[RMDB]
RNA sequence: GGGAACGACUCGAGUAGAGUCGAAAAUGAUCAUUUUGAUCAAUAUAUCAUUCAAGUUUCUGCCCUAUCAGCUUGAUGGUAGUGUAUUGGCCUACCAUGGCGUUAACGGGUAACGGAGAAUUAGGGUUCUUCGGAUUUAUUUCGAUAAAUCCGAAGAAAAAGAAACAACAACAACAAC
Reactivity to 2A3 in 0.01 (KOAc 150mM, MgCl2 10mM, bicine 150mM(pH8.5), 24C), signal-to-noise 4, nucleotides 027 to 126: u130g020a020u020c040a030u120u260u300u260g010a000u000c000a030a000u230a010u030a040u140c100a100u110u140c120a120a010g000u020u020u010c010u050g030c000c000c000u040a040u080c040a060g030c020u090u150g120a020u010g060g020u030a030g020u010g030u150a250u160u260g210g050c010c000u000a010c000c000a020u030g030g000c010g030u030u070a090a050c140g020g080g020u040a080a040c040g050g010a100g050a040a050u090u070a050g000g060g000u000
Reactivity to DMS in 0.01 (KOAc 150mM, MgCl2 10mM, bicine 150mM(pH8.5), 24C), signal-to-noise 2, nucleotides 027 to 126: u000g000a020u020c010a100u040u000u020u010g000a000u000c010a090a090u020a090u000a080u040c100a040u010u000c210a100a110g000u000u000u010c010u000g000c000c000c000u000a090u000c270a140g000c030u000u010g030a030u010g000g000u000a000g000u020g010u000a240u000u010g000g020c070c020u020a020c000c000a040u000g020g000c010g000u000u020a040a080c120g000g080g000u020a030a060c050g020g000a070g020a060a060u000u030a050g030g000g000u010